[RMDB]
Chemical mapping of a 207-nucleotide RNA with 2A3. 2A3 adducts were read by reverse transcription with SuperScript II with manganese. 2A3 is a SHAPE reagent: it acylates the 2'-hydroxyl of flexible nucleotides of all four kinds. Source: RMDB library RNAMAK, as collected in RNAgym. The 2A3 profile rests on 884 reads.

RNA sequence: GGGAACGACUCGAGUAGAGUCGAAAAGUCCAGUUCGCUGGACAAAAUCCUAAGUCGUCGUUUGACGCCUAGUUUUGAUUACGAUAAGUAUCGGAAACGAUACUUUUGACGUAAUGCUAGGCCGAGACGAUAUGGAAAACGAUUCGUUCGCGAAUCGGGCACUAUCACUCUUCGGAGUGAUAGUGCCAAAAGAAACAACAACAACAAC
Reactivity to 2A3 in 0.01 (KOAc 150mM, MgCl2 10mM, bicine 150mM(pH8.5), 24C), signal-to-noise 1, nucleotides 027 to 156: g000u000c000c000a000g030u090u060c300g020c120u040g000g000a020c050a110a000a030a030u060c020c000u040a110a000g020u020c010g020u020c050g030u010u230u300g090a120c050g000c000c000u000a090g020u040u070u200u200g220a050u020u000a000c000g030a070u000a080a000g000u000a020u000c000g060g010a020a150a020c000g030a000u000a020c020u040u000u050u060g190a040c040g000u000a000a000u000g030c000u000a000g000g010c000c030g010a050g000a010c000g000a000u000a060u080g010g070a030a040a000a040c010g030a020u020u000c010g020u070u100c300g010c040g210a000a000u030c000g000